[RMDB]
RNA sequence: GGGAACGACUCGAGUAGAGUCGAAAAGAUAUGGAGACAGGCACGCUGAGGAGCAUUCCUAAGACAGCGCUUCGGAAACGAAGCGUCGAGGAAUGCUCCUCAGAACUACGUGGCUGUCUCCUAAGUCCCUGAAUAUUGACUUCGGUCAAUAUUCAGGAAAAGAAACAACAACAACAAC
Reactivity to DMS in 0.01 (KOAc 150mM, MgCl2 10mM, bicine 150mM(pH8.5), 24C), signal-to-noise 2, nucleotides 027 to 126: g000a060u010a290u010g010g040a050g000a000c000a020g020g020c010a020c050g010c000u000g030a040g000g020a010g010c000a000u000u000c010c010u010a300a100g020a140c300a150g000c020g000c030u000u000c000g000g000a170a080a180c000g030a020a000g020c000g030u000c060g010a030g050g030a030a040u000g010c000u000c000c000u000c000a030g010a030a060c050u010a280c020g020u000g000g010c000u010g020u010c000u000c000c010u000a020a080g010u000c000

Background
Source: RMDB library TTRINS, as collected in RNAgym. This 177-nucleotide RNA was probed chemically with DMS. Conditions: 150 mM KOAc, 10 mM MgCl2 and 150 mM bicine (pH 8.5), 24 C.